RNA sequence: GGGAACGACUCGAGUAGAGUCGAAAAUGGUCAUUUACCAUAUGUACUGUAUGACCCCACAGCUACAGAUGCAAAGCAACACCACAGACACGGAUAUGAAAAGCCUGAAGAAUUGUGGACUGCCAAAGACCAGGUAAUUAUUCGUAAUUACCUGGUCAAAAGAAACAACAACAACAAC
Reactivity to 2A3 in 0.01 (KOAc 150mM, MgCl2 10mM, bicine 150mM(pH8.5), 24C), signal-to-noise 4, nucleotides 027 to 126: u050g020g000u040c070a130u090u100u200a060c020c010a010u050a090u200g070u040a050c020u040g040u110a100u170g110a100c000c000c000c010a060c020a050g040c040u040a010c010a040g050a100u070g020c040a030a040a080g020c010a020a020c080a070c050c000a000c010a020g020a010c030a020c060g020g020a050u050a090u260g130a060a100a040a060g020c010c020u060g090a110a060g050a130a030u030u030g010u020g000g020a030c040u040g020c010c020a080a110a000
Reactivity to DMS in 0.01 (KOAc 150mM, MgCl2 10mM, bicine 150mM(pH8.5), 24C), signal-to-noise 5, nucleotides 027 to 126: u010g000g010u010c170a090u010u000u010a110c060c040a040u010a100u010g010u010a040c070u010g020u000a040u010g020a140c070c020c020c110a080c090a070g030c090u010a050c030a030g000a110u010g010c050a070a100a150g010c040a040a050c090a070c030c010a040c040a050g000a100c080a060c130g000g010a070u000a080u010g000a080a110a110a110g000c030c030u000g010a060a060g010a090a070u010u000g030u000g000g000a140c110u000g000c030c130a070a060a100